[RMDB]
Chemical mapping of a 177-nucleotide RNA with 2A3 and DMS.
RNA sequence: GGGAACGACUCGAGUAGAGUCGAAAACAGCAAACUUCCUUUUAAAAAGGGGGAAAGGAGAAUGUCAAGCUGACUCUCAGUCACUCCUGUCCGUUGCGGCACUGAAGGUGUCACGCACCGUGCGCCAGACAAGCACGACAUUCGUGUCGUGCUUGUCAAAAGAAACAACAACAACAAC
Reactivity to 2A3 in 0.01 (KOAc 150mM, MgCl2 10mM, bicine 150mM(pH8.5), 24C), signal-to-noise 3, nucleotides 027 to 126: c060a030g030c020a050a080a080c010u100u070c010c010u110u060u110u220a300a300a050a020a000g030g000g010g010g020a090a060a000g110g020a030g060a180a100u230g020u140c030a040a160g050c050u020g050a060c000u000c010u000c010a010g020u030c010a010c040u010c000c020u020g050u020c010c000g030u050u060g000c000g030g020c030a010c020u050g100a130a000g000g030u020g000u030c070a050c150g070c030a040c020c060g040u010g020c010g000c010c000a000
Reactivity to DMS in 0.01 (KOAc 150mM, MgCl2 10mM, bicine 150mM(pH8.5), 24C), signal-to-noise 2, nucleotides 027 to 126: c120a110g000c030a020a170a050c010u010u030c000c000u000u000u000u060a050a020a060a060a080g000g030g000g000g020a030a060a020g000g000a070g010a080a030u000g020u050c190a160a280g040c040u020g000a130c080u020c070u000c000a010g000u020c020a210c010u000c010c000u000g000u000c100c050g010u010u000g000c000g000g000c030a000c060u010g000a150a040g000g000u000g000u030c070a110c150g000c030a010c130c010g000u010g000c000g030c050c150a040

Source: RMDB library OK1LIB, as collected in RNAgym.
The 2A3 profile rests on 1,318 reads.
The RNA was probed in 150 mM KOAc, 10 mM MgCl2 and 150 mM bicine (pH 8.5) at 24 C.
The DMS profile rests on 1,933 reads.